Notes: An RNA of 207 nucleotides, treated with DMS and 2A3 and read out base by base. For DMS the reverse transcriptase was MarathonRT. For 2A3, 3,559 sequencing reads were counted. Values cover nucleotides 27 to 156. For DMS, 5,882 sequencing reads were counted.

[RMDB]
RNA sequence: GGGAACGACUCGAGUAGAGUCGAAAAUGAAGUCUGCUUAAAAUGGGAAUUGAUGGAUGAAGAUUACCAGGGCAGACUGUGUAAUCCUCUGAAUCCAUUCGUCAGCCAUAAGGAAAUUGAAUCUGUCAACAAUGCUGUAGUAAUGCCAGCUCAUGGCGACCAAGCUUAAGUUCGCUUAAGCUUGGUCAAAAGAAACAACAACAACAAC
Reactivity to DMS in 0.01 (KOAc 150mM, MgCl2 10mM, bicine 150mM(pH8.5), 24C), signal-to-noise 3, nucleotides 027 to 156: u000g000a080a070g020u000c000u000g020c040u000u000a010a060a120a130u000g030g000g000a110a090u000u010g010a110u000g020g010a170u000g010a060a130g010a070u000u000a020c030c030a120g010g010g020c100a060g000a080c000u000g000u000g010u000a070a060u000c010c010u010c030u000g010a170a090u000c050c010a090u000u000c070g030u000c020a080g020c020c040a100u010a080a120g020g000a050a050a110u010u000g010a080a120u020c050u010g000u000c050a070a080c070a060a100u000g010c010u000g020u000a100g020u010a090a050u000g000c050c020a100g000c070u000c070a110u000g000g060c100
Reactivity to 2A3 in 0.01 (KOAc 150mM, MgCl2 10mM, bicine 150mM(pH8.5), 24C), signal-to-noise 5, nucleotides 027 to 156: u090g030a050a020g030u030c020u040g040c060u110u130a100a110a090a120u130g040g010g050a080a070u070u080g020a040u020g010g040a020u030g030a070a040g000a010u010u010a010c000c000a000g000g010g000c030a010g040a050c000u000g000u030g000u000a010a020u000c000c010u000c050u040g070a050a040u010c030c000a020u050u060c050g060u030c030a050g020c010c000a040u060a110a050g100g010a060a090a040u090u060g040a060a100u030c010u040g050u060c020a010a030c040a060a070u100g010c020u020g010u110a040g050u080a130a030u110g030c020c010a010g000c030u050c070a090u030g030g000c030